The data come from the RNA Mapping Database (RMDB), libraries RFM100 and RFMREP. This 177-nucleotide RNA was probed chemically with 2A3 and DMS. Values cover nucleotides 27 to 126. For DMS the reverse transcriptase was MarathonRT.
RNA sequence: GGGAACGACUCGAGUAGAGUCGAAAAAGGACGACCGGGUCCUUUCCAUUGGAUCAAACCCGCUCAAUGCCUGGAGAUUUGGGCGUGCCCCCGCAAGACUGCUAGCCGAGUAGCGUUGGGUUGCGAAUGUACGAUAUGCAUUCGUGCAUAUCGUACAAAAAGAAACAACAACAACAAC
Reactivity to 2A3 in 0.01 (KOAc 150mM, MgCl2 10mM, bicine 150mM(pH8.5), 24C), signal-to-noise 2, nucleotides 027 to 126: a000g030g000a020c020g020a080c050c000g140g020g000u000c010c000u010u030u000c010c000a060u050u100g050g020a050u060c060a040a020a130c000c000c000g020c000u010c010a080a040u120g040c020c020u080g110g040a080g020a080u040u090u090g010g010g000c010g000u040g000c000c000c000c010c010g010c000a000a040g020a030c030u060g000c010u060a020g060c000c000g070a030g050u030a010g010c000g030u000u020g000g010g000u000u050g010c020g020a080a050
Reactivity to DMS in 0.01 (KOAc 150mM, MgCl2 10mM, bicine 150mM(pH8.5), 24C), signal-to-noise 3, nucleotides 027 to 126: a010g010g000a030c040g020a100c130c100g000g010g000u010c000c010u010u000u020c020c020a140u050u010g030g020a060u000c100a050a080a120c050c030c030g000c060u020c030a060a050u000g010c010c010u000g010g010a100g000a160u020u020u010g010g000g020c010g000u010g000c030c020c010c020c020g010c080a080a090g000a070c070u010g030c030u000a060g010c040c030g020a100g000u010a060g000c050g000u000u000g000g020g000u010u000g010c040g000a100a080